Chemical mapping of a 207-nucleotide RNA with DMS and 2A3. The 2A3 profile rests on 3,179 reads. Values cover nucleotides 27 to 156. The reactions ran in a buffer of 150 mM KOAc, 10 mM MgCl2 and 150 mM bicine (pH 8.5), at 24 C. It was measured as part of the RMDB library OK3TST. For 2A3 the reverse transcriptase was SuperScript II with manganese. For DMS the reverse transcriptase was MarathonRT.
RNA sequence: GGGAACGACUCGAGUAGAGUCGAAAAACACUGGCAAUAUUGCCCUCAAGAGGCCAGUUUCCGUCAACCUCAAGGAAGCCAGUCACGCGAGGCAUUGAAGCAGCGCCAACGGCAGACCAGAUCAAUUGACCAGAACCGUCGAACACGUCAAGCACUCGUUACUGAAAGACUUCGGUCUUUCAGUAACAAAAGAAACAACAACAACAAC
Reactivity to DMS in 0.01 (KOAc 150mM, MgCl2 10mM, bicine 150mM(pH8.5), 24C), signal-to-noise 2, nucleotides 027 to 156: a060c080a110c020u010g010g000c020a080a120u000a170u000u000g040c060c020c040u010c070a120a210g010a050g010g020c010c010a060g030u000u000u000c020c030g010u010c000a120a060c060c030u000c030a100a270g000g030a190a090g020c020c020a080g010u000c030a140c070g020c160g020a100g040g000c030a130u020u000g020a080a120g000c040a090g050c030g020c010c000a070a110c030g030g010c040a080g030a170c060c010a070g010a100u020c030a060a100u000u010g020a060c020c010a130g030a050a050c040c020g020u010c000g000a060a060c040a080c010g010u000c050a080a090g010c030a110c060u000c090
Reactivity to 2A3 in 0.01 (KOAc 150mM, MgCl2 10mM, bicine 150mM(pH8.5), 24C), signal-to-noise 5, nucleotides 027 to 156: a000c030a000c010u010g000g000c020a130a150u080a150u160u110g020c050c030c020u100c030a060a060g040a040g050g000c000c030a020g010u010u010u020c010c010g040u040c060a090a090c030c020u080c050a070a060g040g000a050a020g050c040c020a020g030u040c020a020c070g040c020g020a030g050g000c020a040u020u130g090a100a020g000c050a010g020c010g000c040c040a070a020c030g020g030c030a010g030a090c010c010a010g000a100u070c050a050a100u080u090g070a070c020c020a010g030a070a040c010c020g060u080c040g060a070a030c060a020c050g050u060c090a060a020g030c030a020c060u100c050